Chemical mapping of a 177-nucleotide RNA with 2A3 and DMS. The reactions ran in a buffer of 150 mM KOAc, 10 mM MgCl2 and 150 mM bicine (pH 8.5), at 24 C. The DMS profile rests on 2,906 reads. Reactivities are given for positions 27 through 126.

RNA sequence: GGGAACGACUCGAGUAGAGUCGAAAAGAUAUGGAAUACAGGGAGCUGGCUAUCGGAAACGAUAGUGCAGCGAGGAUCUGUGUUCCUAAGUCAAAGACACGCACUGUCUUCGGACAGUGCGUGUCAAGAUAUCUAAGAGCUUCGGCUCUUAGAUAUCAAAAGAAACAACAACAACAAC
Reactivity to 2A3 in 0.01 (KOAc 150mM, MgCl2 10mM, bicine 150mM(pH8.5), 24C), signal-to-noise 1, nucleotides 027 to 126: g000a000u010a010u040g000g000a010a000u010a000c000a000g000g000g010a010g010c020u000g010g010c000u000a000u000c000g030g000a030a000a000c000g000a000u030a020g010u100g300c000a000g000c030g000a030g000g020a000u020c010u000g000u000g010u030u020c000c000u000a000a000g010u020c030a050a060a070g000a010c020a000c000g050c000a010c020u020g030u020c030u040u140c300g080g000a020c070a000g010u010g010c000g010u000g000u000c000a000a000
Reactivity to DMS in 0.01 (KOAc 150mM, MgCl2 10mM, bicine 150mM(pH8.5), 24C), signal-to-noise 1, nucleotides 027 to 126: g010a020u000a020u010g000g000a020a010u000a010c000a020g000g010g010a000g060c000u000g010g010c000u000a010u000c000g040g000a020a010a020c010g010a010u000a000g010u010g010c020a010g030c000g010a080g000g000a100u010c000u000g000u000g010u000u000c000c000u000a000a050g000u000c000a090a130a160g010a010c000a000c010g000c000a010c000u000g020u000c000u000u030c200g010g000a010c020a000g010u010g010c000g000u000g010u000c000a030a050